[RMDB]
RNA sequence: GGGAACGACUCGAGUAGAGUCGAAAAACACCAGAUGACAUAUCAGCAAGAGUCAGGUUGUGUAACAACGUUAAUGGAUUCUUCGAGAAUGAUCUGACAAAGCAAGACAGACAAACUGACCGAGAUAUCCAUCUCACUCAUUCGUGAGUGAGAUGGAAAAAGAAACAACAACAACAAC
Reactivity to 2A3 in 0.01 (KOAc 150mM, MgCl2 10mM, bicine 150mM(pH8.5), 24C), signal-to-noise 1, nucleotides 027 to 126: a010c040a080c010c000a010g000a100u040g040a020c030a050u080a030u130c040a030g160c090a110a000g030a040g090u000c000a040g020g050u030u070g020u000g090u180a070a050c050a000a040c060g020u150u230a140a070u190g080g000a020u000u050c000u000u020c060g040a070g040a080a050u120g040a080u070c060u080g000a050c090a110a020a000g100c000a040a000g110a030c090a000g070a020c000a040a050a010c040u010g040a060c010c030g070a020g010a150u060a060
Reactivity to DMS in 0.01 (KOAc 150mM, MgCl2 10mM, bicine 150mM(pH8.5), 24C), signal-to-noise 2, nucleotides 027 to 126: a040c060a210c100c010a070g030a060u000g000a080c090a070u000a060u000c040a130g030c250a040a060g030a120g000u000c030a040g000g020u000u000g010u000g030u000a060a080c110a030a030c040g050u000u000a050a030u000g000g020a010u000u000c040u000u010c080g000a090g000a050a080u000g010a050u020c030u000g000a090c070a040a100a120g000c090a080a020g010a110c150a120g000a040c090a030a060a090c060u000g000a070c020c020g030a130g000a060u000a100
An RNA of 177 nucleotides, treated with 2A3 and DMS and read out base by base. 2A3 adducts were read by reverse transcription with SuperScript II with manganese. DMS adducts were read by reverse transcription with MarathonRT.